[RMDB]
RNA sequence: GGGAACGACUCGAGUAGAGUCGAAAAAGCUCGGUCUCGGUCAAUUCGGCGGGAUUCACCGCCGCCAGCACCGCGUCAGCUUCGCGACCGCGACCCUGCCAACCGAGUGCGUAAGCCAAGGGCAGGCUCAUCACCGUUCAUUCGUGAACGGUGAUGAAAAAGAAACAACAACAACAAC
Reactivity to DMS in 0.01 (KOAc 150mM, MgCl2 10mM, bicine 150mM(pH8.5), 24C), signal-to-noise 2, nucleotides 027 to 126: a100g030c020u000c110g020g010u030c010u000c000g000g020u000c010a100a270u010u010c020g020g010c000g020g000g000a250u010u010c180a170c020c060g000c000c010g020c170c130a030g000c090a050c080c050g020c100g020u010c080a090g000c020u000u000c070g030c050g000a080c070c100g000c050g000a060c070c010c010u000g030c030c020a100a150c090c060g010a170g000u000g040c070g020u020a130a080g020c000c030a120a100g020g000g030c020a150g000g000c220
Reactivity to 2A3 in 0.01 (KOAc 150mM, MgCl2 10mM, bicine 150mM(pH8.5), 24C), signal-to-noise 1, nucleotides 027 to 126: a020g010c020u080c080g050g020u040c020u010c020g030g040u040c030a050a130u210u120c010g000g000c000g020g000g090a200u220u290c100a120c120c010g000c000c000g000c000c020a040g000c100a030c030c010g000c010g060u090c070a030g020c010u020u090c050g000c010g040a030c060c000g030c020g060a090c000c000c000u010g000c020c010a030a060c040c030g030a060g060u220g000c050g020u080a100a060g000c010c030a010a010g110g020g000c000a030g000g030c010
This 177-nucleotide RNA was probed chemically with DMS and 2A3.
Reactivities are rounded to 0.1 and cut off at 0 and 3.
The reactions ran in a buffer of 150 mM KOAc, 10 mM MgCl2 and 150 mM bicine (pH 8.5), at 24 C.
For 2A3, 1,600 sequencing reads were counted.
It was measured as part of the RMDB library OK2TRN.
DMS adducts were read by reverse transcription with MarathonRT.
Values cover nucleotides 27 to 126.